The record gives the reactivity of an RNA of 207 nucleotides to 2A3.

RNA sequence: GGGAACGACUCGAGUAGAGUCGAAAAACGACAACUACGCUCUGGCCGCUUAAGGCCUAAGCCUCGAAACCGCUUGUGUCCAUGCUCGCGGUGUAGAGUCACUAUCAUGGAAUCGCGCUGGGUGGCUGCCUGUCAGUCCGGCACUAGAACACAACAGGCUUCAUAGUCCCUUCGGGGACUAUGAAGCAAAAGAAACAACAACAACAAC
Reactivity to 2A3 in 0.01 (KOAc 150mM, MgCl2 10mM, bicine 150mM(pH8.5), 24C), signal-to-noise 1, nucleotides 027 to 156: a010c030g000a030c050a070a040c020u270a000c120g000c000u000c010u000g000g000c000c000g060c230u300u240a240a120g000g000c000c000u000a000a000g000c000c030u000c000g070a080a030a040c000c000g040c000u000u000g000u000g000u000c000c000a000u000g000c030u090c020g050c000g000g000u050g000u010a000g010a000g010u010c000a060c210u180a180u300c000a000u000g000g040a000a000u000c030g010c000g000c030u050g000g040g040u050g020g060c020u050g040c040c050u040g050u090c000a000g050u010c000c030g010g080c000a000c010u050a000g040a100a060c170a000c000a130a020c000a000g000
The reactions ran in a buffer of 150 mM KOAc, 10 mM MgCl2 and 150 mM bicine (pH 8.5), at 24 C.